RNA sequence: GGGAACGACUCGAGUAGAGUCGAAAACAAUAAAAGUGUAAAACGUUUCCACGAACGCAUGACGGCGAUAUUUAACACAUUUGCGAUUGAUAACCCUGAACGCGAGCUUUACCGCCCGCCCGAUGCUGGUGAUAAGUUUAAAUAUGUUAUCGUUAAGACAACAAGUACUGUUCGCAGUACUUGUUGUAAAAGAAACAACAACAACAAC
Reactivity to 2A3 in 0.01 (KOAc 150mM, MgCl2 10mM, bicine 150mM(pH8.5), 24C), signal-to-noise 4, nucleotides 027 to 156: c070a000a030u200a160a100a050a040g050u060g050u120a020a100a040a030c030g020u040u080u000c030c030a030c040g050a110a010c030g020c060a040u090g060a040c030g040g010c020g040a020u020a060u110u160u070a100a040c070a020c030a110u040u090u120g010c040g060a060u040u050g030a050u080a090a050c020c020c000u060g050a060a010c010g020c020g030a020g020c040u030u090u070a030c000c040g010c020c020c020g050c030c060c030g010a020u170g030c050u040g010g030u030g010a030u020a140a030g020u000u030u180a080a100a040u240a060u100g030u040u030a090u080c020g030u030u080a070a010g090
Reactivity to DMS in 0.01 (KOAc 150mM, MgCl2 10mM, bicine 150mM(pH8.5), 24C), signal-to-noise 2, nucleotides 027 to 156: c050a080a190u000a100a110a030a130g020u010g010u070a040a080a100a090c020g010u000u000u000c010c080a100c100g000a120a050c090g000c040a140u020g000a100c050g000g000c020g030a080u000a040u010u000u000a140a100c100a040c030a100u000u010u010g000c080g010a130u000u060g000a110u000a040a100c020c000c050u010g050a110a100c080g020c020g000a050g010c040u000u000u010a140c170c140g000c020c010c050g000c020c080c040g030a060u000g030c050u000g000g020u000g010a100u000a000a070g000u010u020u010a030a080a070u000a060u030g020u020u000a050u000c020g000u000u000a100a190g020
Record summary: This 207-nucleotide RNA was probed chemically with 2A3 and DMS. For DMS the reverse transcriptase was MarathonRT. For DMS, 2,587 sequencing reads were counted. Source: RMDB library OK3TST, as collected in RNAgym. 2A3 adducts were read by reverse transcription with SuperScript II with manganese. The 2A3 profile rests on 2,397 reads.